[RMDB]
Chemical mapping of a 177-nucleotide RNA with DMS and 2A3. Conditions: 150 mM KOAc, 10 mM MgCl2 and 150 mM bicine (pH 8.5), 24 C. The data come from the RNA Mapping Database (RMDB), library M2PK50.
RNA sequence: GGGAACGACUCGAGUAGAGUCGAAAACAGUAUGCCUUCGGGCAUACUGAAACCAGAGGGUAUCUGGCCCACGGUCCCAUGCGUGCCGGGAAUCCCAUCCCAAAACGGAUGUCUUCGGACAUCCGAAGUUAAGCCCGUAGUUCGCUACGGGCUUAACAAAAGAAACAACAACAACAAC
Reactivity to DMS in 0.01 (KOAc 150mM, MgCl2 10mM, bicine 150mM(pH8.5), 24C), signal-to-noise 1, nucleotides 027 to 126: c000a050g000u000a000u000g020c000c000u000u000c240g000g000g000c000a000u000a000c010u040g010a030a090a160c050c050a050g000a070g000g030g010u000a060u000c010u000g000g010c060c000c020a150c050g030g000u000c030c000c010a060u010g000c060g080u010g000c060c080g010g010g000a130a100u010c020c000c010a140u000c000c000c000a050a010a060a130c030g000g000a000u000g000u000c000u000u000c200g030g000a000c000a000u000c000c030g000a030a030
Reactivity to 2A3 in 0.01 (KOAc 150mM, MgCl2 10mM, bicine 150mM(pH8.5), 24C), signal-to-noise 1, nucleotides 027 to 126: c000a000g000u000a000u010g000c000c020u040u100c280g080g000g000c000a000u000a000c000u010g020a090a000a000c010c000a030g050a080g030g080g040u150a080u160c040u010g080g000c000c030c020a010c020g080g020u040c010c020c000a000u070g040c010g100u100g020c040c050g030g020g000a020a040u090c000c000c030a040u020c010c000c000a010a060a020a030c010g000g010a000u000g000u030c000u030u070c190g100g020a000c000a000u000c000c000g000a040a020